[RMDB]
RNA sequence: GGGAACGACUCGAGUAGAGUCGAAAACGGGGGACCACCAGGUUGCCUAAGGAGGGGUGAACCGGCCCAGGUCGGAAACGGAGCAGGUCAAAACUCCCGUGCUGAUCAGUAGUGGGAUCGCGCCUGUGAAUAGCCACUGCACUCCAGCCUGGGCAACGAGAGGAAUUAUGUUCGCAUAAUUCCUCUCAAAAGAAACAACAACAACAAC
Reactivity to 2A3 in 0.01 (KOAc 150mM, MgCl2 10mM, bicine 150mM(pH8.5), 24C), signal-to-noise 1, nucleotides 027 to 156: c010g020g000g010g000g010a010c000c000a010c080c010a040g060g040u020u020g010c010c010u090a120a050g030g000a040g050g070g000g010u030g040a110a070c030c030g050g000c020c000c000a070g000g060u040c050g050g010a050a060a020c020g000g020a020g050c000a000g050g000u110c020a000a000a010a180c020u040c000c000c000g000u020g000c020u070g020a240u210c100a040g060u060a000g080u040g010g000g000a010u040c000g000c010g040c030c000u060g010u030g020a090a100u120a050g000c010c000a060c090u060g000c030a010c040u020c000c000a060g020c010c000u010g000g000g020c010a000a000c010
Chemical mapping of a 207-nucleotide RNA with 2A3.
2A3 adducts were read by reverse transcription with SuperScript II with manganese.
Conditions: 150 mM KOAc, 10 mM MgCl2 and 150 mM bicine (pH 8.5), 24 C.
Values cover nucleotides 27 to 156.